Structure probing data (2A3 and DMS) for a 177-nucleotide construct.
[RMDB]
RNA sequence: GGGAACGACUCGAGUAGAGUCGAAAAAGAAAUAAAAGAAGUGUUACCGGCGACUUUACCUUGACCAGCCCGUACCUAGGUACAUGUCCAUACUGUCACCAUACCGAGCCGUGCUUUAGUCCGAUAACACUAACUGUCUUUUCGAAGACAGUUAGUGAAAAGAAACAACAACAACAAC
Reactivity to 2A3 in 0.01 (KOAc 150mM, MgCl2 10mM, bicine 150mM(pH8.5), 24C), signal-to-noise 4, nucleotides 027 to 126: a000g050a020a030a000u190a030a090a020a020g100a110a010g030u030g020u130u040a030c040c030g050g020c040g020a010c020u090u080u050a050c010c010u050u080g070a060c010c010a020g060c000c010c010g020u030a030c010c020u020a040g100g000u030a040c020a070u080g030u000c020c010a020u030a120c020u050g030u060c030a010c080c020a030u040a070c000c030g020a030g020c000c000g030u030g020c030u080u100u070a040g020u020c030c030g060a080u090a140a020
Reactivity to DMS in 0.01 (KOAc 150mM, MgCl2 10mM, bicine 150mM(pH8.5), 24C), signal-to-noise 5, nucleotides 027 to 126: a070g010a080a080a090u010a060a060a100a110g010a080a080g010u000g010u000u000a060c070c020g020g010c040g010a060c060u000u010u010a060c050c040u000u010g010a070c050c040a110g010c020c030c050g020u010a060c060c040u000a060g000g010u000a040c080a070u010g010u010c030c060a080u000a060c060u000g000u000c040a050c040c030a070u000a060c060c030g000a090g010c040c040g010u010g000c040u000u000u010a080g010u000c010c020g010a100u020a050a150
The reactions ran in a buffer of 150 mM KOAc, 10 mM MgCl2 and 150 mM bicine (pH 8.5), at 24 C.